[RMDB]
Overview:
Conditions: 150 mM KOAc, 10 mM MgCl2 and 150 mM bicine (pH 8.5), 24 C. An RNA of 207 nucleotides, treated with DMS and 2A3 and read out base by base. Values cover nucleotides 27 to 156. The data come from the RNA Mapping Database (RMDB), library RNAMAK.

RNA sequence: GGGAACGACUCGAGUAGAGUCGAAAAACAACGUUCGCGUUGUAACGUAACCUUUGUGAACUGCCUGGUCGUACUUGGAUUUAGCUCUCCCAUUGGGAGAGCUUGUCAGUACCCAGGACCCAGUUCACUCUGGUGGGAAACGGCUUUCGAGCCGUAAGAUAAACGGUGUAUUCGUACACCGUUUAUCAAAAGAAACAACAACAACAAC
Reactivity to DMS in 0.01 (KOAc 150mM, MgCl2 10mM, bicine 150mM(pH8.5), 24C), signal-to-noise 3, nucleotides 027 to 156: a040c010a050a020c020g010u000u010c090g000c300g010u010u000g040u000a030a100c070g010u000a160a040c010c010u000u000u000g020u000g000a020a040c000u010g020c000c020u000g000g020u010c150g010u000a020c030u000u020g040g020a060u000u000u000a020g010c000u000c000u000c000c000c010a300u010u010g060g060g020a030g010a000g020c000u000u000g010u000c000a040g000u000a020c020c010c010a050g000g010a020c080c260c110a030g000u010u000c010a000c010u000c010u010g020g020u000g000g010g010a120a090a080c010g010g010c010u000u010u000c210g010a050g030c000c000g020u000a010a130
Reactivity to 2A3 in 0.01 (KOAc 150mM, MgCl2 10mM, bicine 150mM(pH8.5), 24C), signal-to-noise 5, nucleotides 027 to 156: a000c030a010a010c020g050u070u060c170g030c040g130u000u010g020u050a100a010c050g070u050a010a030c000c000u000u030u000g000u000g000a000a000c000u000g020c000c010u000g020g020u110c140g010u020a000c000u040u180g190g020a060u300u240u120a000g000c000u000c000u020c000c010c130a300u150u300g010g010g000a000g000a000g000c000u000u000g000u000c000a000g000u000a000c010c000c000a010g000g000a000c010c010c000a000g000u000u010c000a000c010u000c000u000g000g000u040g000g020g010a070a260a010c010g010g000c000u100u130u130c280g060a020g000c000c000g000u020a020a040